Chemical mapping of a 177-nucleotide RNA with DMS.
DMS adducts were read by reverse transcription with MarathonRT.
It was measured as part of the RMDB library VIROID.
[RMDB]
RNA sequence: GGGAACGACUCGAGUAGAGUCGAAAACGAGGAAGGACACCCUAAGAAAGGAAGGGUGAAAACCCUGUUUCGGCGGGAAUUACUCCUGUCGGCCGCUGGGCACUCCCCACCGUCCUUUUUUGCCAGUUACACGUAUAGAGUUCGCUCUAUACGUGUAAAAAGAAACAACAACAACAAC
Reactivity to DMS in 0.01 (KOAc 150mM, MgCl2 10mM, bicine 150mM(pH8.5), 24C), signal-to-noise 1, nucleotides 027 to 126: c070g010a040g010g000a040a040g030g010a200c070a080c030c000c010u020a150a050g010a060a050a090g000g000a050a010g000g000g000u000g000a030a050a090a010c010c000c020u000g000u000u000u000c010g000g010c060g000g020g010a030a060u000u000a030c090u000c010c020u000g000u000c010g000g010c050c020g020c040u010g010g000g010c020a060c070u000c000c000c010c010a030c000c010g010u000c000c000u000u000u000u000u000u000g010c040c060a070g000u000